The data come from the RNA Mapping Database (RMDB), library TTRDEL. This 177-nucleotide RNA was probed chemically with DMS.

RNA sequence: GGGAACGACUCGAGUAGAGUCGAAAAGAUAUGGAGAGAACUACAGAUUCCCAGCUCGUUGAAAUCGGAAACGAUGGAGAGCUGCAUCUGCUCUCCUAAGUCAAAGCAUUGCCUUCGGGCAAUGCAACUGGCUGAGUAUGUUCGCAUACUCAGCCAGAAAAGAAACAACAACAACAAC
Reactivity to DMS in 0.01 (KOAc 150mM, MgCl2 10mM, bicine 150mM(pH8.5), 24C), signal-to-noise 1, nucleotides 027 to 126: g000a010u000a300u020g000g000a050g000a110g020a090a060c000u000a300c020a010g000a010u000u000c300c300c020a010g000c020u000c050g030u000u000g020a140a120a050u000c010g000g000a150a110a170c000g000a040u000g000g000a000g000a000g000c000u000g110c210a030u000c000u010g030c000u000c000u000c000c000u000a020a050g000u000c020a090a090a260g000c000a000u000u000g000c010c000u000u000c120g060g000g000c000a020a010u000g000c010a000a000